Description: The data come from the RNA Mapping Database (RMDB), library OK2TRN. Chemical mapping of a 177-nucleotide RNA with DMS and 2A3. For DMS, 3,469 sequencing reads were counted.
[RMDB]
RNA sequence: GGGAACGACUCGAGUAGAGUCGAAAACUAUUGGUUUCCGAACUGUCCAUUGUGUGCCCUCGGUGCUGCCGGGAGAAUUUUCAGCAUGGGAGAUCCUAACAAAGGUACUGAAACUUUUGCAAACUUAAUUUAUGCACCUAUUCGUAGGUGCAUAAAUAAAAGAAACAACAACAACAAC
Reactivity to DMS in 0.01 (KOAc 150mM, MgCl2 10mM, bicine 150mM(pH8.5), 24C), signal-to-noise 4, nucleotides 027 to 126: c050u000a100u010u010g010g020u000u000u000c020c020g010a120a090c070u010g010u000c030c040a070u010u000g000u010g030u000g020c020c000c010u000c060g010g030u010g000c110u000g010c090c060g000g000g020a070g010a060a050u010u010u000u000c050a090g040c050a070u010g000g010g020a100g010a080u010c010c030u000a080a120c070a030a060a040g010g020u000a070c130u000g000a080a060a060c080u000u000u000u000g010c160a060a080a090c070u000u000a060
Reactivity to 2A3 in 0.01 (KOAc 150mM, MgCl2 10mM, bicine 150mM(pH8.5), 24C), signal-to-noise 1, nucleotides 027 to 126: c020u030a150u080u100g080g000u060u000u000c060c050g000a010a060c040u030g020u000c020c000a060u130u050g070u060g040u030g130c020c000c000u020c020g000g090u100g070c020u060g040c010c010g000g090g010a040g020a050a120u000u060u130u090c070a040g000c020a030u000g000g000g000a030g010a040u020c010c030u070a070a000c030a100a150a020g080g000u040a020c020u070g050a120a080a050c000u040u080u170u150g050c100a070a090a090c070u090u120a050
Reactivities are given for positions 27 through 126. The RNA was probed in 150 mM KOAc, 10 mM MgCl2 and 150 mM bicine (pH 8.5) at 24 C.